[RMDB]
RNA sequence: GGGAACGACUCGAGUAGAGUCGAAAAGGUAUCUGAUAUCGAACUUUGAUGAGACGUCAUGCGUAUUCACUCCGGAUGGGACAGUUUGCAGCCAGAAUGCGUUGUACCCAAUGAGCCCAUUGCUCCACCGUGUCAUCCUAUUCGUAGGAUGACACGGAAAAGAAACAACAACAACAAC
Reactivity to DMS in 0.01 (KOAc 150mM, MgCl2 10mM, bicine 150mM(pH8.5), 24C), signal-to-noise 3, nucleotides 027 to 126: g010g020u000a040u000c080u010g000a110u010a080u000c060g010a100a070c100u010u000u000g000a110u010g010a160g000a080c050g020u000c040a030u000g000c050g010u010a050u000u010c050a110c040u010c040c050g030g000a100u000g030g000g000a090c090a110g000u010u020u010g030c010a100g000c040c110a080g010a050a070u000g000c060g030u020u000g010u000a100c050c020c010a070a130u000g010a120g010c020c060c090a070u000u000g030c040u000c030c140a120
Reactivity to 2A3 in 0.01 (KOAc 150mM, MgCl2 10mM, bicine 150mM(pH8.5), 24C), signal-to-noise 3, nucleotides 027 to 126: g070g010u050a040u150c090u100g060a070u040a010u160c040g020a080a110c030u100u090u170g150a200u130g020a060g020a050c050g050u050c030a060u090g000c020g020u070a060u000u120c040a030c040u000c020c030g010g090a070u050g080g000g030a040c010a030g040u060u220u180g060c030a020g110c000c040a040g100a180a040u060g020c000g060u010u020g040u140a190c000c000c020a030a060u110g020a000g020c010c030c000a060u030u130g030c010u040c030c010a080